[RMDB]
Annotation
This 177-nucleotide RNA was probed chemically with DMS and 2A3. DMS (dimethyl sulfate) methylates the pairing face of unpaired adenines and cytosines. As a SHAPE reagent, 2A3 marks flexible, mostly unpaired nucleotides at the ribose 2'-OH.
RNA sequence: GGGAACGACUCGAGUAGAGUCGAAAAGCAAGCCUCAUGCGCAAGACACGCAGUGCAUGAAACGUUAGCAAGACACGAAGCCCAGUGUAACAACGUGACACUAUCUUAGGAUAGUCGCAGGGCUGCAAAAUAUUUUAAAAUUCGUUUUAAAAUAUUUAAAAGAAACAACAACAACAAC
Reactivity to DMS in 0.01 (KOAc 150mM, MgCl2 10mM, bicine 150mM(pH8.5), 24C), signal-to-noise 9, nucleotides 027 to 126: g000c060a070a080g000c020c030u010c020a030u000g010c000g010c040a090a120g010a150c130a070c160g010c140a130g020u000g000c010a030u000g000a040a080a060c120g000u010u010a100g020c090a120a080g010a090c060a020c040g010a100a070g020c010c010c010a200g020u000g000u010a070a110c150a080a050c050g010u000g010a120c140a050c010u000a000u000c010u000u050a130g010g010a010u000a000g000u000c080g010c080a080g000g000g010c010u000g000c110a090
Reactivity to 2A3 in 0.01 (KOAc 150mM, MgCl2 10mM, bicine 150mM(pH8.5), 24C), signal-to-noise 8, nucleotides 027 to 126: g040c040a070a030g020c000c000u030c020a040u030g000c010g010c020a070a090g130a120c060a020c150g120c100a050g010u010g030c010a010u020g000a080a050a010c040g000u020u030a040g050c060a090a000g100a070c020a000c060g060a050a010g030c000c000c020a020g000u020g020u060a110a090c100a020a020c030g050u040g050a010c010a000c060u010a010u010c010u030u060a070g140g020a010u010a010g020u040c050g010c030a010g020g000g000c000u000g000c000a030